[RMDB]
RNA sequence: GGGAACGACUCGAGUAGAGUCGAAAAGAUAUGGAAUGGUGUCCUCCAUAGGCAAUGAUGUUGACCUAAGCUCGGAAACGAGCUUAGGUCAAUUGAGCCUAUGAGCCAGGACACCCAUUCCUAAGUCGCGUAAUACUGUCUUCGGACAGUAUUACGCAAAAGAAACAACAACAACAAC
Reactivity to DMS in 0.01 (KOAc 150mM, MgCl2 10mM, bicine 150mM(pH8.5), 24C), signal-to-noise 1, nucleotides 027 to 126: g010a120u010a300u030g000g010a060a000u000g010g010u000g000u000c010c000u000c110c000a010u000a010g000g000c000a250a110u030g030a080u010g010u030u000g040a040c000c010u010a000a000g010c000u000c000g000g000a160a090a130c030g000a000g020c010u010u010a000g040g000u000c000a000a010u000u000g010a040g010c000c000u000a000u000g000a060g000c170c300a020g000g010a020c020a000c120c070c010a000u000u000c000c000u000a100a130g020u000c020